[RMDB]
RNA sequence: GGGAACGACUCGAGUAGAGUCGAAAAAGCCCAUCUGCUGGGCGAUCGACCACGUGCGGGUUUGCGUCGGACACGGAUACCCAGACGGACCAGCCGCCCUCGACGUGCGGGUCGCGGCCGUGGUGACCAACUGACGGGGGUUCGCCCCCGUCAGUUGAAAAGAAACAACAACAACAAC
Reactivity to DMS in 0.01 (KOAc 150mM, MgCl2 10mM, bicine 150mM(pH8.5), 24C), signal-to-noise 1, nucleotides 027 to 126: a160g000c020c000c000a120u000c240u010g000c140u010g010g000g000c100g050a000u000c100g050a080c000c000a090c110g090u140g040c060g000g000g000u000u000u040g000c070g000u000c200g000g050a200c100a120c000g000g000a000u010a060c030c000c000a170g020a110c130g000g100a060c000c030a160g000c000c000g000c000c070c030u040c090g000a080c000g040u050g040c050g000g000g000u030c150g000c070g010g030c010c030g040u000g050g010u010g000a130c010
Reactivity to 2A3 in 0.01 (KOAc 150mM, MgCl2 10mM, bicine 150mM(pH8.5), 24C), signal-to-noise 2, nucleotides 027 to 126: a020g070c080c020c030a000u030c140u300g120c080u040g000g000g000c040g010a080u120c090g040a000c000c000a000c040g020u210g060c080g000g040g060u090u150u210g090c070g000u040c040g010g080a070c040a020c120g060g030a060u120a160c000c000c000a000g080a000c030g010g000a010c000c000a000g000c020c000g000c000c000c090u110c030g300a300c140g110u220g040c050g000g000g010u040c070g000c080g130g000c000c010g000u020g000g070u060g020a030c010